[RMDB]
RNA sequence: GGGAACGACUCGAGUAGAGUCGAAAAUCACAUCCCAAGCAUGGCGUGAUGCCUGCAUGGGAAGCGCGUCUCGGCGAUGCGACCGUCAAGCAACUUGCCAUCUUUGUCCAUUCGUUGGGUGGCGGUAUCACUCGAGCAUGUUCGCAUGCUCGAGUGAAAAAGAAACAACAACAACAAC
Reactivity to 2A3 in 0.01 (KOAc 150mM, MgCl2 10mM, bicine 150mM(pH8.5), 24C), signal-to-noise 2, nucleotides 027 to 126: u030c000a000c020a140u020c010c000c040a030a000g000c000a060u300g010g020c040g140u280g260a040u250g070c010c000u000g010c000a010u030g040g000g000a080a060g040c010g020c000g070u000c010u000c040g170g080c020g010a010u040g020c000g050a020c010c030g030u090c020a040a010g000c020a050a070c050u060u230g040c030c010a050u000c070u060u090u190g070u060c060c030a110u100u120c100g100u100u040g050g100g010u010g010g070c000g010g020u090a060
Reactivity to DMS in 0.01 (KOAc 150mM, MgCl2 10mM, bicine 150mM(pH8.5), 24C), signal-to-noise 1, nucleotides 027 to 126: u000c020a120c140a080u000c000c000c000a040a110g030c020a030u030g010g010c010g000u000g020a150u030g010c010c000u000g030c050a100u000g000g000g000a020a050g010c000g000c070g000u010c050u000c150g000g000c140g000a030u010g000c090g000a060c040c010g020u020c130a040a100g050c070a050a070c070u000u000g020c090c030a070u010c120u000u000u000g000u010c090c140a100u010u000c130g020u010u000g000g010g040u010g020g010c010g000g010u000a120